[RMDB]
Annotation:
The data come from the RNA Mapping Database (RMDB), library M2PK90. Chemical mapping of a 177-nucleotide RNA with DMS and 2A3. The reactions ran in a buffer of 150 mM KOAc, 10 mM MgCl2 and 150 mM bicine (pH 8.5), at 24 C. The DMS profile rests on 2,970 reads. DMS adducts were read by reverse transcription with MarathonRT.
RNA sequence: GGGAACGACUCGAGUAGAGUCGAAAAGAAAAUGGUACGAACGGUUCCAAAGGAGCCGAAGUUCAAAGCUAAGGCAUCGAUCUAAAAUCGUAACAAAAAGGUAACGAGCUUGGCAAUGAACAAAAAAGGCAUAUACUAGAUUCGUCUAGUAUAUGCCAAAAGAAACAACAACAACAAC
Reactivity to DMS in 0.01 (KOAc 150mM, MgCl2 10mM, bicine 150mM(pH8.5), 24C), signal-to-noise 3, nucleotides 027 to 126: g000a060a080a040a060u000g010g010u000a080c150g020a120a220c020g020g000u000u000c000c010a060a160a140g010g010a020g010c000c000g020a030a070g040u000u000c020a000a010a300g000c020u010a020a020g020g000c060a050u010c000g000a040u000c030u010a060a060a120a090u000c210g000u000a060a070c120a020a090a050a060a040g000g010u000a040a100c040g030a080g010c000u000u000g010g000c010a010a220u000g000a000a000c030a000a040a050a070a050a110
Reactivity to 2A3 in 0.01 (KOAc 150mM, MgCl2 10mM, bicine 150mM(pH8.5), 24C), signal-to-noise 2, nucleotides 027 to 126: g060a000a100a010a060u160g050g040u150a030c060g010a210a000c010g010g010u020u000c030c000a250a110a200g020g000a010g000c000c010g030a050a020g000u000u000c000a000a000a020g000c000u030a030a000g100g040c020a110u030c020g030a010u000c010u090a060a010a090a190u130c090g110u080a080a060c040a120a080a040a020a000g030g010u030a060a020c010g000a010g010c000u010u010g020g000c000a010a050u020g000a010a010c030a020a100a000a000a000a020